[RMDB]
RNA sequence: GGGAACGACUCGAGUAGAGUCGAAAACGGAGAUCGAUCACGUUGUGCUCGUGGGUGGUUCGACCCGGAUGCCCGCGGUGACCGAUCUGGUCAAGGAACUCACCGGCGGCAAGGAACCCAACAAGGGCUCAGAAGUUUGUUUCGACAAACUUCUGAGAAAAGAAACAACAACAACAAC
Reactivity to DMS in 0.01 (KOAc 150mM, MgCl2 10mM, bicine 150mM(pH8.5), 24C), signal-to-noise 2, nucleotides 027 to 126: c080g000g000a030g000a020u000c030g010a150u000c010a000c100g000u000u040g000u000g010c020u000c100g040u010g000g000g020u000g000g020u020u000c090g000a130c050c010c000g000g000a190u010g030c050c000c100g000c100g050g020u010g010a030c020c050g000a070u070c070u020g000g020u000c060a170a160g000g000a150a110c080u040c050a040c030c010g010g010c030g020g020c010a080a070g020g020a020a150c000c000c000a090a100c150a110a120g000g000g000
Reactivity to 2A3 in 0.01 (KOAc 150mM, MgCl2 10mM, bicine 150mM(pH8.5), 24C), signal-to-noise 3, nucleotides 027 to 126: c010g060g010a070g030a110u140c070g000a000u040c020a010c050g120u120u180g120u110g050c060u010c060g020u040g000g050g000u150g030g110u070u030c020g010a120c010c000c050g000g020a030u080g000c000c040c040g040c020g020g050u050g000a030c050c000g030a100u050c040u090g000g050u110c070a100a080g090g000a060a080c020u020c050a000c010c010g100g000c010g010g000c020a050a030g070g010a030a040c000c010c000a010a010c060a050a100g120g040g000